[RMDB]
RNA sequence: GGGAACGACUCGAGUAGAGUCGAAAACGCUGGGUAACACGAGAAACAUUAGGGAGCUGAAGCGCGCACGGCGAAGAACUAAUGGAACCUCGAUGGUUACCUGUGCUGAAGCGCGCACGGCAACCGAAAGGUGCGAUGGCGGCUGUUCGCAGCCGAAUAGACUUCUACAAUUCGUUGUAGAAGUCUAAAAAGAAACAACAACAACAAC
Reactivity to DMS in 0.01 (KOAc 150mM, MgCl2 10mM, bicine 150mM(pH8.5), 24C), signal-to-noise 2, nucleotides 027 to 156: c060g000c060u000g030g030g040u000a010a000c000a150c030g000a010g010a070a050a100c000a040u000u000a010g000g010g010a110g000c010u000g030a100a050g030c000g000c020g030c020a300c050g000g020c000g020a170a230g020a130a220c000u000a010a020u000g000g000a220a260c090c000u010c010g040a190u010g030g020u000u000a010c000c000u000g020u000g010c000u010g010a130a070g000c000g020c010g020c000a180c040g000g000c030a060a200c000c030g020a040a090a160g010g020u000g010c040g000a160u010g020g030c000g000g010c010u010g010u000u010c250g010c010a060g030c000c000g000a100a190
Reactivity to 2A3 in 0.01 (KOAc 150mM, MgCl2 10mM, bicine 150mM(pH8.5), 24C), signal-to-noise 2, nucleotides 027 to 156: c070g000c060u180g010g000g000u000a000a000c000a000c000g000a000g010a030a020a000c010a000u000u000a000g000g020g010a010g000c010u040g030a180a050g010c000g000c010g000c000a020c020g000g000c020g030a100a010g000a020a020c020u000a010a000u020g000g010a010a010c010c010u030c030g130a230u040g070g000u000u030a030c000c000u010g010u030g000c040u100g030a170a020g010c000g000c000g000c030a000c010g060g030c050a120a030c000c000g020a040a040a010g000g010u020g010c020g050a070u140g130g060c030g000g020c010u030g010u060u090c280g000c150a010g000c010c030g000a010a010